Source: RMDB library RFMREP, as collected in RNAgym.
An RNA of 177 nucleotides, treated with DMS and 2A3 and read out base by base.
RNA sequence: GGGAACGACUCGAGUAGAGUCGAAAAAAGUAUAUGGGCUAUGGGGAUAGUACGAUCGCAAGAUUGAAACUUGAAGAAAUUGACGGAAGGACACCACCAGGAGUGGAGUGUGCGGCUUAAUUUGACUCAACAUUAAUAUGUUCGCAUAUUAAUGUUGAAAAGAAACAACAACAACAAC
Reactivity to DMS in 0.01 (KOAc 150mM, MgCl2 10mM, bicine 150mM(pH8.5), 24C), signal-to-noise 5, nucleotides 027 to 126: a060a070g000u010a090u000a080u010g000g010g030c050u010a060u000g010g000g020g010a080u000a030g030u000a110c090g010a040u000c030g020c210a050a070g000a050u000u000g000a090a100a080c070u000u000g010a090a080g010a030a060a070u010u010g000a070c080g000g010a060a050g000g010a080c070a100c060c030a070c020c040a080g000g010a130g010u010g010g010a070g000u010g020u000g010c100g010g010c070u000u010a040a070u000u000u010g010a210c150u000
Reactivity to 2A3 in 0.01 (KOAc 150mM, MgCl2 10mM, bicine 150mM(pH8.5), 24C), signal-to-noise 4, nucleotides 027 to 126: a000a000g110u090a100u030a040u160g010g020g020c030u030a040u060g020g010g010g000a010u030a040g040u040a040c030g010a010u010c020g010c050a030a040g010a040u020u100g040a180a060a010c030u040u060g050a060a050g050a060a140a050u090u090g020a030c030g000g030a010a020g030g000a010c000a020c020c020a040c000c010a030g040g020a070g080u060g010g010a040g040u070g020u050g010c060g050g000c040u050u080a040a060u130u120u120g030a010c020u010

For 2A3 the reverse transcriptase was SuperScript II with manganese.